The record gives the reactivity of an RNA of 177 nucleotides to 2A3 and DMS. DMS adducts were read by reverse transcription with MarathonRT. The data come from the RNA Mapping Database (RMDB), library 15KREP. The RNA was probed in 150 mM KOAc, 10 mM MgCl2 and 150 mM bicine (pH 8.5) at 24 C.

RNA sequence: GGGAACGACUCGAGUAGAGUCGAAAAUGUAGUGAAGAGAUUGUACAACCCAUCACUUUCUAACUUUGCGUUAGCAUUGUGCAGUGGUGUAAUGUGGUUGUACACUUAUAGCAUUGGAGAAGCCUCAGUGAGUGUUAAACUUCGGUUUAACACUCACAAAAGAAACAACAACAACAAC
Reactivity to 2A3 in 0.01 (KOAc 150mM, MgCl2 10mM, bicine 150mM(pH8.5), 24C), signal-to-noise 2, nucleotides 027 to 126: u050g010u010a070g080u030g160a130a070g060a030g020a140u000u110g000u000a000c010a000a000c000c000c010a000u040c000a010c000u170u220u090c020u010a040a010c020u000u010u020g020c020g130u100u170a030g000c010a000u020u040g020u030g070c070a050g010u010g030g000u030g010u060a030a120u060g050u110g000g000u010u000g020u000a000c000a010c000u020u020a050u090a040g000c050a020u010u050g080g010a120g060a100a040g070c000c010u020c020a000
Reactivity to DMS in 0.01 (KOAc 150mM, MgCl2 10mM, bicine 150mM(pH8.5), 24C), signal-to-noise 2, nucleotides 027 to 126: u000g020u000a130g020u030g010a080a140g010a150g010a110u010u000g040u000a000c000a010a010c000c010c010a030u000c010a000c000u000u000u010c030u000a170a030c030u000u000u000g010c000g000u010u010a100g000c010a020u000u000g000u010g010c270a050g000u010g000g000u000g010u020a020a020u000g020u010g010g020u010u000g010u000a000c000a010c030u000u010a040u000a190g020c010a030u000u000g010g000a140g000a170a190g010c060c000u000c170a150